[RMDB]
Overview: The record gives the reactivity of an RNA of 177 nucleotides to DMS and 2A3. 2A3 adducts were read by reverse transcription with SuperScript II with manganese. Reactivities are given for positions 27 through 126. For DMS, 1,262 sequencing reads were counted.
RNA sequence: GGGAACGACUCGAGUAGAGUCGAAAAGAAUAACAUUGGGCUCUCGGAAGUCUGGAAUCACGUGAAGAUCGCGUAAGGCGAUACUAAUGCGAUAGGCUUCUUCAUGCUCUAAAGAGACAUGUCCGCCCCGUUAUAGACCGUUCGCGGUCUAUAACGGAAAAGAAACAACAACAACAAC
Reactivity to DMS in 0.01 (KOAc 150mM, MgCl2 10mM, bicine 150mM(pH8.5), 24C), signal-to-noise 2, nucleotides 027 to 126: g010a110a050u000a070a100c110a120u000u010g000g020g020c010u000c170u000c120g000g000a010a020g020u000c020u010g010g000a170a070u000c020a040c030g000u000g000a110a270g000a050u000c010g020c000g050u010a190a160g000g010c000g000a020u000a030c030u000a230a000u010g010c030g000a000u000a040g010g020c010u000u000c020u000u000c110a050u000g010c060u000c030u010a070a110a100g010a070g010a070c100a030u010g000u000c070c060g000c120c000
Reactivity to 2A3 in 0.01 (KOAc 150mM, MgCl2 10mM, bicine 150mM(pH8.5), 24C), signal-to-noise 1, nucleotides 027 to 126: g010a040a120u140a120a000c040a060u040u070g020g040g000c000u000c060u060c130g010g010a000a000g010u000c020u010g050g120a080a020u070c030a010c040g010u000g060a080a000g000a010u000c000g000c000g110u220a200a030g190g000c000g000a000u000a030c020u020a010a040u050g000c010g000a010u020a010g020g010c030u000u000c000u030u050c040a020u050g000c010u020c000u060a060a120a040g040a010g000a060c020a040u080g000u050c060c080g040c000c000